Record summary: This 177-nucleotide RNA was probed chemically with 2A3 and DMS. It was measured as part of the RMDB library OK2TST. The RNA was probed in 150 mM KOAc, 10 mM MgCl2 and 150 mM bicine (pH 8.5) at 24 C. Reactivities are given for positions 27 through 126.
[RMDB]
RNA sequence: GGGAACGACUCGAGUAGAGUCGAAAAUUACGAAAAUUGCGUACGCUGUUUCAGAGCAUGUCAAAAUAGAAACAGGUAAUCCAUUCUUUCAAACAUCACAUAGUGGUUGUGCGACGGGCGGAUCCUGAAUCACUGACUAAUUCGUUAGUCAGUGAUUAAAAGAAACAACAACAACAAC
Reactivity to 2A3 in 0.01 (KOAc 150mM, MgCl2 10mM, bicine 150mM(pH8.5), 24C), signal-to-noise 5, nucleotides 027 to 126: u050u020a030c030g050a040a030a030a120u110u070g070c010g020u030a040c080g000c060u040g070u090u060u080c080a040g020a030g070c060a060u070g070u140c060a030a040a070a090u130a090g100a030a080a000c010a010g010g010u040a010a040u000c000c000a030u140u050c010u030u100u010c020a030a040a010c010a040u030c030a010c030a090u180a100g110u140g150g030u050u100g020u030g010c030g000a010c020g010g000g000c020g000g010a020u030c000c000u020g020
Reactivity to DMS in 0.01 (KOAc 150mM, MgCl2 10mM, bicine 150mM(pH8.5), 24C), signal-to-noise 9, nucleotides 027 to 126: u010u010a110c070g010a070a040a080a110u000u000g020c050g030u000a050c120g020c020u000g000u010u000u010c050a100g000a090g000c050a050u010g010u000c080a060a070a060a100u020a100g010a080a060a170c030a020g010g020u000a050a100u000c030c010a040u000u010c040u000u000u000c020a050a300a040c040a020u010c010a020c030a100u000a170g020u000g010g000u000u010g030u000g010c300g010a030c300g000g010g010c150g000g000a030u000c000c010u000g000